[RMDB]
RNA sequence: GGGAACGACUCGAGUAGAGUCGAAAAGACCGACCGGGAGGGCUUGAAUUGUUUGCAAUGGAACCUCAAGAUACCUCCGCGGCUACUUGAAGGUUUCAUCCUGCUGUGGCAACAGGAGCUCGGUGGAUAAUAGUAGCGUGUUCGCACGCUACUAUUAAAAAGAAACAACAACAACAAC
Reactivity to 2A3 in 0.01 (KOAc 150mM, MgCl2 10mM, bicine 150mM(pH8.5), 24C), signal-to-noise 1, nucleotides 027 to 126: g020a030c000c050g000a010c030c000g020g000g030a020g010g160g020c020u080u020g010a160a110u180u010g000u110u100u130g040c090a060a030u040g030g010a000a000c000c000u000c000a000a010g000a010u060a050c000c000u060c070c040g040c060g010g040c040u050a020c010u040u010g030a150a000g050g010u030u030u010c010a010u080c020c050u050g000c020u060g070u290g140g000c000a030a020c030a090g010g060a000g040c030u020c010g000g040u050g040g010a020
Reactivity to DMS in 0.01 (KOAc 150mM, MgCl2 10mM, bicine 150mM(pH8.5), 24C), signal-to-noise 3, nucleotides 027 to 126: g000a220c020c010g000a070c060c000g010g000g010a060g020g010g000c020u020u000g020a100a130u000u000g010u000u000u000g010c050a090a050u010g010g000a010a000c010c160u010c000a010a010g010a200u000a060c020c010u000c190c140g010c100g030g010c090u010a020c010u000u000g010a090a060g010g000u000u000u000c010a030u000c050c080u000g010c030u020g010u000g010g010c030a020a060c030a050g000g010a080g010c030u000c020g000g020u000g010g010a160
An RNA of 177 nucleotides, treated with 2A3 and DMS and read out base by base.
Reactivities are given for positions 27 through 126.
For DMS, 3,706 sequencing reads were counted.
Conditions: 150 mM KOAc, 10 mM MgCl2 and 150 mM bicine (pH 8.5), 24 C.
2A3 adducts were read by reverse transcription with SuperScript II with manganese.
High 2A3 reactivity points to a flexible backbone, as in loops and unpaired stretches.